Chemical mapping of a 207-nucleotide RNA with 2A3.

RNA sequence: GGGAACGACUCGAGUAGAGUCGAAAAGGAAGAAAGAAAUUAGCUCGCCAGUUAGCGAGGUCUGUCCCCACACGACAGAUAAUCGGGUGCAACUCCCGCCCCUUUUCCGAGGGUCAUCGGAACCAAAAAAACUCAGGCAACUUCGGUUGCCUGAGAACCUGUUUAAGUCCUUCGGGACUUAAACAGGAAAAGAAACAACAACAACAAC
Reactivity to 2A3 in 0.01 (KOAc 150mM, MgCl2 10mM, bicine 150mM(pH8.5), 24C), signal-to-noise 1, nucleotides 027 to 156: g020g020a070a030g010a040a110a050g040a040a070a050u110u050a110g040c010u020c000g020c070c050a090g090u130u120a000g020c000g000a000g000g000u000c000u000g000u020c000c020c040c000a090c000a010c100g000a000c010a010g010a010u040a030a090u090c000g000g020g000u000g010c000a000a000c010u010c000c000c000g030c000c000c000c000u140u200u030u000c000c000g000a000g000g000g030u100c010a000u030c000g000g010a000a000c020c040a100a030a070a070a040a030a040c010u000c000a000g010g040c010a000a000c000u040u100c180g090g010u010u000g050c010c000u020g000a010g010a010a010
Reactivities are given for positions 27 through 156. For 2A3, 659 sequencing reads were counted. The data come from the RNA Mapping Database (RMDB), library M2RFPK. Conditions: 150 mM KOAc, 10 mM MgCl2 and 150 mM bicine (pH 8.5), 24 C.